[RMDB]
RNA sequence: GGGAACGACUCGAGUAGAGUCGAAAAGAACUUUGGCCGGCUCGGAAUAGAAUCAGGGGGUGCAAACUGCCCACUGGCAGAAAGGAUUAUAGCAAAUGCGUACGCUAUUGCAAUACAGCCCGGCCAACAUAGACUACUCUAUUCGUAGAGUAGUCAAGUGGAUAAUACACUUCGGUGUAUUAUCCACAAAAGAAACAACAACAACAAC
Reactivity to DMS in 0.01 (KOAc 150mM, MgCl2 10mM, bicine 150mM(pH8.5), 24C), signal-to-noise 1, nucleotides 027 to 156: g000a120a080c140u000u000u030g020g000c000c020g030g000c050u000c060g000g000a130a140u000a060g000a110a110u020c040a040g000g000g000g010g100u000g050c040a090a070a180c110u000g000c000c000c050a030c100u000g010g000c110a090g000a150a100a120g000g020a180u000u000a100u010a080g040c020a080a060a240u020g000c060g050u000a100c150g070c020u020a060u000u000g000c050a050a110u000a060c090a080g000c110c010c000g020g020c000c020a010a030c100a070u010a160g000a050c000u000a010c000u000c000u000a070u020u010c280g020u000a020g020a050g010u000a020g010u010c000a010a020
Reactivity to 2A3 in 0.01 (KOAc 150mM, MgCl2 10mM, bicine 150mM(pH8.5), 24C), signal-to-noise 2, nucleotides 027 to 156: g030a040a010c040u030u010u050g000g000c000c010g000g000c010u000c060g060g050a090a120u130a090g070a050a110u170c050a030g030g000g010g000g000u040g000c050a130a070a110c080u080g000c000c000c010a060c050u060g000g000c080a000g110a100a100a000g100g000a070u120u100a080u160a060g000c010a040a060a140u130g040c120g080u060a020c070g000c020u030a030u050u050g000c020a070a000u050a150c040a020g000c010c050c000g000g010c000c010a000a000c000a020u110a000g000a010c000u000a000c000u010c000u000a010u010u010c070g070u070a020g000a010g000u000a000g000u000c000a000a000